[RMDB]
RNA sequence: GGGAACGACUCGAGUAGAGUCGAAAAUUAAAUAGAUACAAGGCCAAAGUAUCAAAAUAAGAUACAACCGGAAAGUAUCAAAAACAAAGUACAUACAUGAAAGGCCAAACAUGUAUGUACAAAAAAACUAUCUUUAGUGAUUCGUCACUAAAGAUAGAAAAGAAACAACAACAACAAC
Reactivity to DMS in 0.01 (KOAc 150mM, MgCl2 10mM, bicine 150mM(pH8.5), 24C), signal-to-noise 1, nucleotides 027 to 126: u010u010a050a030a070u000a180g000a030u000a000c020a080a160g000g040c000c000a070a120a100g020u000a000u000c000a020a170a120a130u000a040a020g000a000u000a000c010a030a220c140c190g010g000a090a080a060g010u000a000u030c000a030a070a080a040a100c060a070a040a150g000u000a000c000a000u000a000c000a000u000g010a020a300a060g010g020c010c040a000a110a040c010a000u010g040u000a000u000g010u000a000c000a020a000a070a030a010a030a100
Reactivity to 2A3 in 0.01 (KOAc 150mM, MgCl2 10mM, bicine 150mM(pH8.5), 24C), signal-to-noise 1, nucleotides 027 to 126: u120u030a050a020a090u190a110g030a010u000a000c010a050a000g030g000c010c010a000a090a000g000u000a000u000c020a010a070a070a190u180a050a020g010a000u000a000c020a020a050c060c050g070g010a080a050a000g030u000a000u030c020a020a060a010a060a010c060a000a100a000g000u000a000c020a000u010a000c000a000u000g010a060a030a010g020g000c000c010a050a000a030c000a010u000g000u000a000u010g000u000a000c000a000a000a000a000a000a000a000
An RNA of 177 nucleotides, treated with DMS and 2A3 and read out base by base. The 2A3 profile rests on 2,417 reads. For DMS, 1,196 sequencing reads were counted. Source: RMDB library M2PK90, as collected in RNAgym. The RNA was probed in 150 mM KOAc, 10 mM MgCl2 and 150 mM bicine (pH 8.5) at 24 C.